[RMDB]
RNA sequence: GGGAACGACUCGAGUAGAGUCGAAAAUCGGCGGCCCGCUUGAGCGCCGCAUAGACCGACACGCCUCGGGCCACCGGAAGCAACGCCGUCACCCAGGUCAUGGUGUCGGGGGCCGGGCGGAUCGUCACGUUAGUCAGAGAUUCGUCUCUGACUAACGAAAAGAAACAACAACAACAAC
Reactivity to 2A3 in 0.01 (KOAc 150mM, MgCl2 10mM, bicine 150mM(pH8.5), 24C), signal-to-noise 4, nucleotides 027 to 126: u110c020g000g000c000g000g000c000c010c010g020c070u050u070g160a060g120c190g040c050c030g010c020a030u160a030g110a050c010c010g000a000c000a000c010g030c010c010u080c120g050g010g010c050c020a060c040c010g010g010a030a010g120c080a040a020c060g010c020c000g030u050c020a030c000c010c000a020g040g000u090c110a150u180g140g000u000g040u040c010g000g000g020g010g000c000c000g000g020g000c000g000g000a030u020c010g010u010c010a010
Reactivity to DMS in 0.01 (KOAc 150mM, MgCl2 10mM, bicine 150mM(pH8.5), 24C), signal-to-noise 6, nucleotides 027 to 126: u000c090g010g000c020g000g000c030c010c020g030c120u000u000g000a140g030c110g020c010c020g030c150a050u010a070g020a260c050c010g000a030c080a030c030g000c010c010u000c160g040g000g020c020c070a100c230c030g000g000a040a060g000c240a110a130c210g000c000c010g020u000c300a110c000c000c030a060g000g000u000c160a130u000g030g010u000g010u000c000g010g000g000g000g000c010c000g000g010g000c010g020g010a030u000c020g020u000c030a210